[RMDB]
RNA sequence: GGGAACGACUCGAGUAGAGUCGAAAAGUGCGUAGCGGCUAGGAGCGCGGUGAAACCCUUGCUGGCACCAUCCAGUGCUGCAGUUUGCGACGGUCCCAACUGCUGCCUCCACCGCGCCGUUUAGAACAUUUAUCCAUAGCUUCGGCUAUGGAUAAAUAAAAGAAACAACAACAACAAC
Reactivity to 2A3 in 0.01 (KOAc 150mM, MgCl2 10mM, bicine 150mM(pH8.5), 24C), signal-to-noise 6, nucleotides 027 to 126: g140u120g000c030g020u050a050g030c030g010g060c090u120a110g030g030a050g020c040g000c020g020g000u040g060a100a050a050c000c000c000u010u080g030c030u040g010g020c010a010c050c000a110u150c040c040a040g020u020g010c020u060g010c020a050g030u080u170u140g080c080g050a080c050g040g030u070c010c020c010a010a010c020u020g000c010u040g000c000c010u030c010c010a040c000c000g000c010g000c000c010g010u040u080u120a120g030a050a010c030
Reactivity to DMS in 0.01 (KOAc 150mM, MgCl2 10mM, bicine 150mM(pH8.5), 24C), signal-to-noise 5, nucleotides 027 to 126: g010u030g010c080g010u020a060g010c020g010g000c070u040a070g010g010a130g020c010g020c020g010g010u000g000a060a090a120c030c040c080u030u020g010c030u010g010g000c090a070c090c120a110u040c160c130a070g000u000g010c030u010g010c060a050g010u020u020u020g010c080g000a070c130g010g010u000c010c030c050a120a060c030u000g030c020u000g010c100c040u010c030c010a080c010c010g000c010g010c040c040g000u000u010u020a040g020a080a140c190